Source information:
Source: RMDB library OK3TST, as collected in RNAgym. An RNA of 207 nucleotides, treated with 2A3 and read out base by base. For 2A3, 453 sequencing reads were counted. The reactions ran in a buffer of 150 mM KOAc, 10 mM MgCl2 and 150 mM bicine (pH 8.5), at 24 C.
RNA sequence: GGGAACGACUCGAGUAGAGUCGAAAAUACAGAAAGCCUUACAAUUGUGUUACAGUAGCCUACAGUAUUCAGUACAGUAACAUGCUGGACAGGCAUGUAGCCUAGGAGCAAUAGGCUGUUUCAUCUAGCCUGGGUGUGUACUAGGCUGUACCACCUAGGUACGGAAAGUGUUCGCACUUUCCGUACCAAAAGAAACAACAACAACAAC
Reactivity to 2A3 in 0.01 (KOAc 150mM, MgCl2 10mM, bicine 150mM(pH8.5), 24C), signal-to-noise 1, nucleotides 027 to 156: u080a000c100a030g010a030a130a010g010c020c030u090u140a030c070a170a260u260u200g060u030g010u000u000a000c000a080g130u160a000g080c020c060u040a040c010a000g070u020a050u100u300c010a000g070u100a190c000a030g010u100a070a110c000a000u010g000c000u050g000g080a050c050a090g000g000c000a000u010g010u050a020g020c000c000u000a090g090g000a070g020c070a060a080u060a000g000g000c000u070g000u020u170u060c010a030u000c040u150a010g040c020c000u010g020g150g020u030g030u030g000u000a030c000u000a000g000g150c010u040g000u000a010c010c010a040c050c000u040a070
2A3 adducts were read by reverse transcription with SuperScript II with manganese.